[RMDB]
RNA sequence: GGGAACGACUCGAGUAGAGUCGAAAAGGGGUCCUGACAACAGCUCGAAAUACAGCAUCGAUCUGUACUGAAGCCUCCACGGUACAGGGAGCUGUUUCGAGACAUGUCAGGACGGAGGCACCCAAAAGCUAGGAUCCGUUUCGACGGAUCCUAGCAAACUGUGAAACUUCUUCGGAAGUUUCACAGUAAAAGAAACAACAACAACAAC
Reactivity to 2A3 in 0.01 (KOAc 150mM, MgCl2 10mM, bicine 150mM(pH8.5), 24C), signal-to-noise 1, nucleotides 027 to 156: g060g020g100g020u010c040c000u000g030a000c130a290a000c050a170g010c010u000c000g020a040a030a020u300a140c020a010g010c010a050u300c090g000a000u000c000u010g010u000a010c000u030g040a100a000g010c000c010u000c000c010a020c000g010g020u010a000c010a000g010g000g000a000g010c000u010g030u010u000u000c000g010a000g040a060c040a100u300g000u000c010a000g000g000a000c010g000g000a000g000g000c000a010c000c000c000a040a150a020a020g000c000u000a000g000g030a000u000c010c000g000u000u100u180c240g060a020c020g020g000a000u000c000c000u000a000g000c000a000a000
Chemical mapping of a 207-nucleotide RNA with 2A3.
Values cover nucleotides 27 to 156.
The data come from the RNA Mapping Database (RMDB), library RNAMAK.